[RMDB]
An RNA of 177 nucleotides, treated with 2A3 and DMS and read out base by base. The DMS profile rests on 12,654 reads. It was measured as part of the RMDB library OK2TRN. For 2A3 the reverse transcriptase was SuperScript II with manganese. For 2A3, 7,593 sequencing reads were counted. The reactions ran in a buffer of 150 mM KOAc, 10 mM MgCl2 and 150 mM bicine (pH 8.5), at 24 C.

RNA sequence: GGGAACGACUCGAGUAGAGUCGAAAACGCGUGUUAGGCGAACGUGAUAACCACUACACUACGGAAACAGAUGCGGAGAGGUUACUCUAUGACUUUUAUAAGUGUUAUAGUCAACAUCCAGGUGUCGUGGAUAGAAAUAUUUCGAUAUUUCUAUCCAAAAAGAAACAACAACAACAAC
Reactivity to 2A3 in 0.01 (KOAc 150mM, MgCl2 10mM, bicine 150mM(pH8.5), 24C), signal-to-noise 5, nucleotides 027 to 126: c030g010c020g010u080g050u100u150a080g090g000c050g030a040a010c010g050u030g020a100u050a080a070c010c010a020c030u060a020c010a010c040u130a020c060g040g060a040a120a010c030a030g050a050u080g050c030g040g020a040g010a020g090g030u060u060a040c020u010c020u070a060u080g050a050c010u090u130u140u080a270u110a230a070g040u040g010u100u060a050u020a030g040u040c020a000a020c000a050u020c020c010a060g090g000u040g010u060c050g050
Reactivity to DMS in 0.01 (KOAc 150mM, MgCl2 10mM, bicine 150mM(pH8.5), 24C), signal-to-noise 9, nucleotides 027 to 126: c070g010c120g020u000g010u010u000a080g020g020c050g010a060a060c070g010u000g000a090u000a100a120c040c030a110c050u000a100c060a050c060u010a120c120g000g000a080a080a080c070a060g010a070u000g020c060g000g010a080g010a060g010g010u000u010a060c060u010c030u000a060u000g000a040c020u000u000u010u010a130u010a100a100g010u000g010u000u000a040u000a040g010u000c040a040a040c060a050u000c020c030a140g020g020u000g020u000c120g010